[RMDB]
RNA sequence: GGGAACGACUCGAGUAGAGUCGAAAAGUGUGGGAAAACACUAGAAAUAUUAACUUGCUGUAAAGCAUCCUACUGCCAGCGGAAUCACAUCUGGUAACAGAUGCCUCUGGGGCCAAAAGCCAAGGUUUUAUACUUGACUUUUCGAAGUCAAGUAUAAAAAAGAAACAACAACAACAAC
Reactivity to DMS in 0.01 (KOAc 150mM, MgCl2 10mM, bicine 150mM(pH8.5), 24C), signal-to-noise 4, nucleotides 027 to 126: g000u010g020u010g020g000g010a080a120a150a040c010a040c020u000a090g000a150a110a080u050a100u030u020a080a130c080u010u000g000c010u000g000u030a070a090a080g000c010a050u020c010c030u000a080c150u000g010c010c020a010g020c070g000g010a080a030u030c200a230c010a010u000c000u000g000g000u010a130a100c030a010g000a020u000g000c010c020u000c000u000g000g010g000g020c010c030a050a080a140a170g010c030c020a090a100g020g000u010u000
Reactivity to 2A3 in 0.01 (KOAc 150mM, MgCl2 10mM, bicine 150mM(pH8.5), 24C), signal-to-noise 6, nucleotides 027 to 126: g030u040g000u020g010g110g070a030a200a050a020c020a020c020u020a040g140a050a150a030u280a100u170u130a090a090c050u060u080g000c020u020g090u220a110a120a060g000c020a040u050c000c020u020a080c050u060g060c000c000a010g010c030g020g030a060a040u140c050a030c000a070u000c010u000g020g000u020a060a000c000a000g010a000u010g000c000c010u000c000u010g050g010g000g000c020c020a020a120a040a010g000c000c000a020a030g070g000u000u000
Annotation
Structure probing data (DMS and 2A3) for a 177-nucleotide construct. Conditions: 150 mM KOAc, 10 mM MgCl2 and 150 mM bicine (pH 8.5), 24 C. Reactivities are given for positions 27 through 126. Source: RMDB libraries RFM100 and RFMREP, as collected in RNAgym.